The record gives the reactivity of an RNA of 177 nucleotides to DMS and 2A3.
The data come from the RNA Mapping Database (RMDB), library TTRDES.
For 2A3, 1,441 sequencing reads were counted.
For DMS the reverse transcriptase was MarathonRT.
RNA sequence: GGGAACGACUCGAGUAGAGUCGAAAAGAUAUGGAGCGGUGGCCCGUUCUAUGAAGUUGGUCGGAAACGACCAAUGGAGAACUCCACCCGCUCCUAAGUCAAACAAUUUGAGUUCGCUCAAAUUGAACCGACUAGGAUAGUUCGCUAUCCUAGUCGGAAAAGAAACAACAACAACAAC
Reactivity to DMS in 0.01 (KOAc 150mM, MgCl2 10mM, bicine 150mM(pH8.5), 24C), signal-to-noise 2, nucleotides 027 to 126: g000a050u000a280u000g010g000a020g100c030g040g030u000g010g010c300c240c300g000u000u010c010u000a230u040g030a170a200g030u000u000g010g020u000c000g000g000a050a020a100c000g040a020c000c020a000a000u000g000g000a000g010a000a010c000u040c000c010a030c100c040c170g040c010u000c000c010u000a000a010g000u000c010a160a240a300c010a000a000u000u000u010g000a020g000u000u010c300g010c000u010c000a010a000a020u000u010g000a080a210
Reactivity to 2A3 in 0.01 (KOAc 150mM, MgCl2 10mM, bicine 150mM(pH8.5), 24C), signal-to-noise 1, nucleotides 027 to 126: g000a020u030a020u120g000g000a020g030c020g000g000u040g020g000c240c200c000g060u120u000c200u220a300u040g020a010a000g010u010u000g010g000u010c000g000g050a120a000a090c020g000a000c000c010a000a000u010g010g000a020g040a020a020c040u050c020c000a050c050c010c000g000c000u000c000c010u000a010a000g000u010c000a140a120a160c010a050a000u030u030u030g000a050g060u080u260c300g000c160u020c010a010a010a050u010u000g020a040a010